[RMDB]
RNA sequence: GGGAACGACUCGAGUAGAGUCGAAAAUGAUGCCAGCGCCGUCUACGUCAACACCGAGUCAUUGGCGGCCUACGGUGCCAUGGGGCGAAGCAUCAGUACAGACCUUGCCACCGUGGCCGGCAGCCGCGUCGAGUAGCAGUUUCGACUGCUACUCGACAAAAGAAACAACAACAACAAC
Reactivity to DMS in 0.01 (KOAc 150mM, MgCl2 10mM, bicine 150mM(pH8.5), 24C), signal-to-noise 2, nucleotides 027 to 126: u000g000a070u000g010c030c040a080g000c080g010c020c020g010u000c030u010a100c080g000u010c060a060a110c110a120c090c050g000a060g010u010c080a140u010u000g020g030c000g000g000c020c010u000a100c040g010g000u010g000c060c010a000u000g000g000g020g010c020g010a100a100g020c140a150u020c050a120g010u000a070c130a190g000a110c150c020u000u000g000c100c010a060c000c010g060u000g000g010c000c020g000g040c150a060g010c020c020g000c070
Reactivity to 2A3 in 0.01 (KOAc 150mM, MgCl2 10mM, bicine 150mM(pH8.5), 24C), signal-to-noise 1, nucleotides 027 to 126: u100g070a010u080g050c030c000a020g020c010g040c030c020g000u000c020u080a040c010g040u050c070a090a020c050a040c050c000g050a000g060u000c010a060u040u070g120g010c000g000g020c000c000u030a030c010g090g020u080g040c000c010a050u060g000g040g030g000c050g060a000a010g000c000a070u130c050a020g020u050a080c040a050g080a050c010c000u000u040g020c030c010a260c070c010g010u000g000g000c020c020g010g000c000a000g020c020c000g000c040